[RMDB]
RNA sequence: GGGAACGACUCGAGUAGAGUCGAAAAUUCGCCUACAAGAACGUACGGUGUUGAGGCCCUGUCCGCCGCUGCGCUGCCACCUACUCUUCGCGCCGCUAGUCGAGCGGACUCCAGGUGGGAGCUUCCCUAUUCUCUCACGCUCUUUUCUUUUUGCGCACUGAGGAAAUAUCUUCGGAUAUUUCCUCAGAAAAGAAACAACAACAACAAC
Reactivity to 2A3 in 0.01 (KOAc 150mM, MgCl2 10mM, bicine 150mM(pH8.5), 24C), signal-to-noise 3, nucleotides 027 to 156: u090u040c020g010c000c000u030a040c080a120a180g090a290a050c080g020u070a030c100g070g000u070g050u050u100g050a110g060g000c050c030c050u060g000u010c010c010g000c020c000g030c040u030g000c010g020c020u050g050c030c050a050c020c000u110a210c040u090c050u280u270c090g040c010g000c080c020g000c020u040a040g080u190c100g070a040g030c010g010g000a000c010u010c010c060a040g050g000u000g030g010g020a010g040c000u090u080c010c000c010u050a140u190u040c020u000c000u030c010a020c020g100c010u040c000u120u080u050u050c010u030u070u050u140u220g090c070g000c040a040
Notes
Source: RMDB library VIROID, as collected in RNAgym. An RNA of 207 nucleotides, treated with 2A3 and read out base by base. 2A3 is a SHAPE reagent: it acylates the 2'-hydroxyl of flexible nucleotides of all four kinds.